[RMDB]
RNA sequence: GGGAACGACUCGAGUAGAGUCGAAAACUUGGGGAGCUUAAGAUAUAGUCGGUCCCCACCGCAAGGUGGGCUCAUGGGAGAAAAGCCUUGUAAGAAGGCUGGAGAGCCCAUGAGCAGCUUGAGCAGUUGUUCUCAAGCUGGGGUAAACGAGAGGUGAUCAUGCAAUAACGUUCGCGUUAUUGCAUGAAAAAGAAACAACAACAACAAC
Reactivity to 2A3 in 0.01 (KOAc 150mM, MgCl2 10mM, bicine 150mM(pH8.5), 24C), signal-to-noise 3, nucleotides 027 to 156: c040u060u060g000g000g010g000a020g030c020u100u080a080a030g070a100u100a040u080a170g050u030c020g020g020u030c010c010c000c000a010c010c000g010c050a050a050g000g000u010g010g010g010c000u000c010a000u000g000g000g010a030g070a030a080a010a000g000c000c000u020u010g050u040a110a160g140a060a010g190g000c000u030g010g030a080g020a040g010c020c010c000a000u000g000a010g000c000a000g010c000u000u010g000a000g000c050a050g000u020u010g000u020u040c000u010c000a000a000g000c000u010g010g000g020g010u050a060a110a030c070g020a040g010a020g110g030u070g010a040
Reactivity to DMS in 0.01 (KOAc 150mM, MgCl2 10mM, bicine 150mM(pH8.5), 24C), signal-to-noise 3, nucleotides 027 to 156: c040u000u020g010g020g030g020a070g020c030u010u000a070a120g010a150u000a090u000a080g010u000c020g010g010u000c000c010c000c000a030c000c000g000c220a110a110g020g040u000g010g010g030c000u010c000a020u000g020g000g000a100g000a100a240a190a070g000c000c050u000u010g000u010a120a210g020a050a020g020g020c010u000g010g010a240g000a150g000c000c020c000a010u000g000a020g010c000a020g010c000u000u000g000a010g010c040a150g010u000u000g000u010u010c000u000c000a010a020g030c010u000g020g000g010g030u000a040a090a060c050g000a090g010a100g010g000u010g020a180